RNA sequence: GGGAACGACUCGAGUAGAGUCGAAAAGCUUAGCAGUUCGCUGCUAAGCGACGUUGACGGCCCUCACCGUUGACAAAUCCGAAUGAGGACAGGUGACUGACAGAUAUUAAGCGUUCGCGCUUAAUAAAUGUGGCUUUAGUUUCGACUAAAGCCACAUAAAAGAAACAACAACAACAAC
Reactivity to 2A3 in 0.01 (KOAc 150mM, MgCl2 10mM, bicine 150mM(pH8.5), 24C), signal-to-noise 1, nucleotides 027 to 126: g030c000u000u000a000g000c000a020g010u010u110c180g110c080u010g030c000u030a000a000g000c000g000a030c060g000u030u000g030a000c020g020g000c040c020c000u020c040a010c000c020g030u000u030g010a010c000a010a120a010u000c020c020g110a100a180u200g010a070g030g010a010c020a020g070g050u040g070a090c020u010g020a010c010a090g060a030u010a020u140u020a000a010g010c000g060u040u020c170g070c010g020c090u000u010a010a000u000a020a100
Reactivity to DMS in 0.01 (KOAc 150mM, MgCl2 10mM, bicine 150mM(pH8.5), 24C), signal-to-noise 2, nucleotides 027 to 126: g010c000u000u000a000g000c000a010g010u000u020c290g050c000u000g010c000u010a010a000g000c010g000a020c180g000u000u000g000a010c000g000g000c040c020c060u000c050a300c050c000g000u000u000g000a010c050a060a100a140u020c040c020g000a100a080u030g000a050g000g000a170c020a050g000g020u000g010a140c080u000g000a060c150a080g030a180u000a010u000u000a000a020g000c020g020u000u000c290g000c030g030c000u000u000a000a000u010a020a050
This 177-nucleotide RNA was probed chemically with 2A3 and DMS.
Source: RMDB library M2PK50, as collected in RNAgym.
The 2A3 profile rests on 1,358 reads.
Values are in units of 0.01, from 0 to 300, in steps of 10.